Structure probing data (DMS) for a 177-nucleotide construct. The RNA was probed in 150 mM KOAc, 10 mM MgCl2 and 150 mM bicine (pH 8.5) at 24 C. It was measured as part of the RMDB library TTRINS. For DMS, 2,641 sequencing reads were counted.
RNA sequence: GGGAACGACUCGAGUAGAGUCGAAAAGAUAUGGAAACAUCUGCACAUCAGCGAUGAAAGCAAUACCUUCCCUCGGAAACGAGGGAAGGUAUUGCUGGAGCUGUUGUGCAGAGUGUUUCCUAAGUCAGCUGUAGUAUUUGUUCGCAAAUACUACAGCAAAAGAAACAACAACAACAAC
Reactivity to DMS in 0.01 (KOAc 150mM, MgCl2 10mM, bicine 150mM(pH8.5), 24C), signal-to-noise 1, nucleotides 027 to 126: g000a050u000a300u000g000g000a000a010a000c000a050u000c000u000g000c000a020c000a000u000c000a010g030c000g000a110u040g010a120a190a040g020c000a010a010u000a000c000c000u000u000c000c000c010u000c010g000g000a120a100a220c020g020a040g010g010g010a000a000g000g020u000a000u000u000g000c000u000g020g000a080g010c000u000g030u000u000g000u000g000c000a000g000a000g000u000g010u000u000u000c000c000u000a000a040g020u020c050a160